[RMDB]
Source information:
Source: RMDB library TTRINS, as collected in RNAgym. The record gives the reactivity of an RNA of 177 nucleotides to DMS and 2A3. Reactivities are rounded to 0.1 and cut off at 0 and 3. Values cover nucleotides 27 to 126. For 2A3, 3,417 sequencing reads were counted. Conditions: 150 mM KOAc, 10 mM MgCl2 and 150 mM bicine (pH 8.5), 24 C.

RNA sequence: GGGAACGACUCGAGUAGAGUCGAAAAGAUAUGGACCAGAACUACUCUUCCCUUGCUCAUCGAUCAAUGAUUCACAUCGGAAACGAUGUGAAUCAUUGGGAGAGCAAGCAGAGCUGGUCCUAAGUCAGUAUUGAGUGUUGUUCGCAACACUCAAUACAAAAGAAACAACAACAACAAC
Reactivity to DMS in 0.01 (KOAc 150mM, MgCl2 10mM, bicine 150mM(pH8.5), 24C), signal-to-noise 3, nucleotides 027 to 126: g000a050u000a300u020g010g000a020c000c010a030g020a100a050c030u010a300c010u000c000u010u000c180c290c000u020u010g020c010u000c010a300u000c150g000a090u030c010a010a010u000g000a020u000u000c000a000c000a020u000c000g000g010a140a110a170c000g020a000u000g010u000g020a000a000u000c000a000u000u010g000g000g000a050g010a030g000c010a020a000g060c240a000g010a030g030c010u000g000g000u010c000c000u000a000a130g000u010c110a120
Reactivity to 2A3 in 0.01 (KOAc 150mM, MgCl2 10mM, bicine 150mM(pH8.5), 24C), signal-to-noise 2, nucleotides 027 to 126: g070a040u120a070u210g020g000a030c000c000a020g030a040a060c280u300a100c020u300c000u040u060c010c000c030u000u000g000c050u020c120a300u300c140g130a200u070c020a020a000u000g030a000u000u040c010a020c000a000u010c010g030g070a030a120a000c000g010a000u010g030u000g000a020a010u000c010a000u000u020g000g020g000a010g000a000g000c010a010a010g020c110a000g000a020g000c000u020g010g000u040c000c000u000a020a010g080u000c080a030